[RMDB]
RNA sequence: GGGAACGACUCGAGUAGAGUCGAAAAAGCAGGAGUACGCUCCUGCAUGGGUAGACGAACUGACCCCAACUGAAGUUCAAUUCUAACGUUAAAAGGAGUUUUAUAUGACUGGACGUACGCGUCCAGAUGACGAUUUCAUUCUUCGGAAUGAAAUCAACCUAAGUUAUAGGUUCGCCUAUAACUUAGGAAAAGAAACAACAACAACAAC
Reactivity to 2A3 in 0.01 (KOAc 150mM, MgCl2 10mM, bicine 150mM(pH8.5), 24C), signal-to-noise 4, nucleotides 027 to 156: a000g010c010a000g020g050a010g010u050a050c170g050c100u000c000c000u000g000c000a010u050g000g000g000u080a070g020a140c070g040a080a050c020u030g040a040c040c010c020c020a070a050c080u180g060a060a010g050u060u030c030a040a040u090u030c040u160a100a060c140g100u140u150a100a090a040a020g180g020a110g020u090u100u110u120a190u060a090u150g160a100c000u010g000g000a000c000g000u040a020c210g030c020g100u000c000c010a010g000a010u040g030a010c050g000a000u000u010u010c010a000u000u000c000u000u040c110g100g010a010a000u000g000a000a000a000u010c000a000a010
Reactivity to DMS in 0.01 (KOAc 150mM, MgCl2 10mM, bicine 150mM(pH8.5), 24C), signal-to-noise 2, nucleotides 027 to 156: a120g040c060a010g030g030a040g050u000a060c300g030c040u000c000c000u010g030c000a000u000g000g000g040u000a070g010a110c060g030a050a090c060u000g000a150c020c000c010c060a090a190c080u000g010a140a070g020u000u010c020a100a140u000u050c070u010a080a130c110g000u000u010a110a090a060a080g010g010a100g020u000u020u010u000a090u000a100u040g000a130c030u000g010g000a010c010g000u000a090c270g050c100g010u000c000c000a020g010a020u010g020a080c100g000a020u000u000u000c000a020u000u000c020u000u000c300g050g000a020a010u000g000a000a000a000u000c010a030a100